[RMDB]
RNA sequence: GGGAACGACUCGAGUAGAGUCGAAAAACUGAAAAGGACGGCAUCGUAAUUCACUGGUGGGGUCUUCCUCAGGGCCAGGGCAUCGACAGUGUGCGAACAACCUUUGGUAACGGAGGUCGUCAGGCCAGUGCUCACUUCGGUGCAACUGAUGGCGAGGGCAGGAGGAAGGAUUCGUCCUUCCUCCUGCAAAAGAAACAACAACAACAAC
Reactivity to 2A3 in 0.01 (KOAc 150mM, MgCl2 10mM, bicine 150mM(pH8.5), 24C), signal-to-noise 1, nucleotides 027 to 156: a000c090u100g000a120a140a030a100g030g020a000c040g100g000c050a060u110c130g040u170a090a080u210u100c100a020c030u170g070g000u020g050g070g030g000u120c080u000u010c000c000u100c090a080g000g090g130c000c000a060g040g060g000c080a000u000c030g000a050c060a090g100u130g000u000g040c000g130a150a040c050a070a070c000c010u280u270u010g050g000u010a120a020c010g000g020a020g030g070u010c030g100u090c000a000g000g300c020c000a010g020u000g100c040u040c000a000c000u040u000c020g000g000u000g000c040a050a070c000u030g000a030u040g060g150c040g000a000g000g000